[RMDB]
RNA sequence: GGGAACGACUCGAGUAGAGUCGAAAAGUAGCAGCAGACAUGCGGAUGAUUACAUCUGAUGUAAUCCCAUGAGUUAUAAGAACGUCCUAUGGGAACAGUGGAGCGUGAUUGAGCUCGAGAAUCAUGGAGUAGCUUCCUUAUUCGUAAGGAAGCUACUAAAAGAAACAACAACAACAAC
Reactivity to 2A3 in 0.01 (KOAc 150mM, MgCl2 10mM, bicine 150mM(pH8.5), 24C), signal-to-noise 4, nucleotides 027 to 126: g090u080a010g010c050a000g000c010a010g020a070c010a020u090g020c040g000g000a050u060g010a010u000u110a050c010a020u040c060u130g080a080u040g030u050a070a080u030c010c000c000a010u070g010a010g080u110u120a190u000a170a070g040a040a000c000g010u010c010c000u030a040u040g000g000g010a010a030c000a000g050u050g000g040a090g040c010g000u030g040a050u010u120g030a000g020c020u010c020g040a070g070a060a080u090c030a040u100g040g000
Reactivity to DMS in 0.01 (KOAc 150mM, MgCl2 10mM, bicine 150mM(pH8.5), 24C), signal-to-noise 5, nucleotides 027 to 126: g010u010a120g010c050a010g010c040a050g000a060c050a050u010g000c080g010g000a080u020g020a100u020u010a060c030a050u000c090u010g020a040u000g010u000a040a060u010c010c030c010a030u020g010a040g000u000u010a060u010a050a060g010a120a030c040g010u000c010c020u010a150u010g020g000g060a090a100c020a000g000u000g000g010a080g010c020g020u010g010a160u010u010g010a060g010c000u000c010g000a110g000a060a050u020c050a060u010g000g000

This 177-nucleotide RNA was probed chemically with 2A3 and DMS. 2A3 adducts were read by reverse transcription with SuperScript II with manganese. The RNA was probed in 150 mM KOAc, 10 mM MgCl2 and 150 mM bicine (pH 8.5) at 24 C. It was measured as part of the RMDB library OK1LIB.